[RMDB]
Notes: This 207-nucleotide RNA was probed chemically with DMS and 2A3. It was measured as part of the RMDB library OK3TST. Conditions: 150 mM KOAc, 10 mM MgCl2 and 150 mM bicine (pH 8.5), 24 C. The 2A3 profile rests on 8,354 reads. Values cover nucleotides 27 to 156.

RNA sequence: GGGAACGACUCGAGUAGAGUCGAAAAUAGCCCAUCUUCAUCAGUGGCAAUCAUCCUUAGCAGUUCAUGCAUUCAUUCAUGUAUUUAACAUACAUUUACUGCGCACCUGCCAGUGCACGUGCUGUGAUCAGCACUGGGUUACAGUGGUGGGCCAAGCUCACUCUAGUAUCUUCGGAUACUAGAGUGAAAAAGAAACAACAACAACAAC
Reactivity to DMS in 0.01 (KOAc 150mM, MgCl2 10mM, bicine 150mM(pH8.5), 24C), signal-to-noise 4, nucleotides 027 to 156: u010a110g000c010c010c000a070u010c040u000u000c100a130u010c050a060g020u010g020g040c040a140a120u000c040a140u000c070c060u000u010a170g020c000a050g020u010u010c070a050u000g020c020a090u000u000c080a150u000u000c180a120u000g020u000a040u000u010u000a100a150c130a100u000a010c000a020u000u000u000a040c050u000g010c050g030c040a070c170c040u000g010c020c020a140g030u000g020c020a050c080g020u000g020c000u000g030u000g020a060u010c010a060g030c000a030c010u000g020g010g020u000u000a120c070a080g020u000g000g030u010g000g020g010c010c040a030a120g010c090
Reactivity to 2A3 in 0.01 (KOAc 150mM, MgCl2 10mM, bicine 150mM(pH8.5), 24C), signal-to-noise 8, nucleotides 027 to 156: u150a010g020c010c000c000a030u020c030u210u060c030a160u030c020a040g020u060g070g000c030a050a100u060c030a070u090c070c020u070u120a020g000c010a010g010u080u070c030a040u100g040c020a070u050u150c020a060u130u060c010a010u060g030u050a070u040u120u110a150a080c070a050u050a010c010a010u040u060u070a060c040u020g020c030g000c050a060c020c040u060g000c000c010a050g010u030g050c010a010c100g030u020g010c020u040g050u120g120a110u160c030a020g010c010a000c010u010g030g010g030u080u090a040c030a080g060u040g060g000u010g000g030g000c020c020a070a020g010c010